[RMDB]
Source: RMDB library OK2TST, as collected in RNAgym.
This 177-nucleotide RNA was probed chemically with DMS and 2A3.
The DMS profile rests on 1,289 reads.
For DMS the reverse transcriptase was MarathonRT.
RNA sequence: GGGAACGACUCGAGUAGAGUCGAAAAGAUGGUACGGAACACCCUGAUCCUGCUCGCGCUGGUGAGACAUUUGCUGCUUUCGUUGGCAUGUUGACCACCGGCAUUGAUGCCGAGCAUCCGGCGUUACAGCCAAUAAGCCGUUCGCGGCUUAUUGGCUAAAAGAAACAACAACAACAAC
Reactivity to DMS in 0.01 (KOAc 150mM, MgCl2 10mM, bicine 150mM(pH8.5), 24C), signal-to-noise 2, nucleotides 027 to 126: g010a130u000g020g040u020a080c070g000g000a150a140c090a030c030c000c000u000g000a110u000c050c000u010g030c010u000c030g010c020g030c030u010g020g010u010g010a070g010a210c100a010u000u000u000g010c010u010g010c020u000u000u020c170g010u000u010g010g000c020a040u000g000u000u000g020a300c100c020a000c000c030g020g010c000a140u000u020g000a100u000g020c070c000g060a040g000c010a100u000c100c020g010g010c090g020u000u000a070c210
Reactivity to 2A3 in 0.01 (KOAc 150mM, MgCl2 10mM, bicine 150mM(pH8.5), 24C), signal-to-noise 1, nucleotides 027 to 126: g020a040u150g000g080u100a060c050g030g070a080a010c020a020c040c020c040u030g050a050u030c020c010u020g030c020u010c070g020c010g000c000u030g010g010u000g060a060g000a010c010a030u130u140u000g000c000u020g010c040u150u260u190c220g110u130u000g020g050c020a000u020g040u020u030g040a050c000c010a010c000c020g000g040c030a000u010u270g050a020u050g050c060c010g010a000g080c020a010u070c020c020g030g050c000g030u070u100a080c060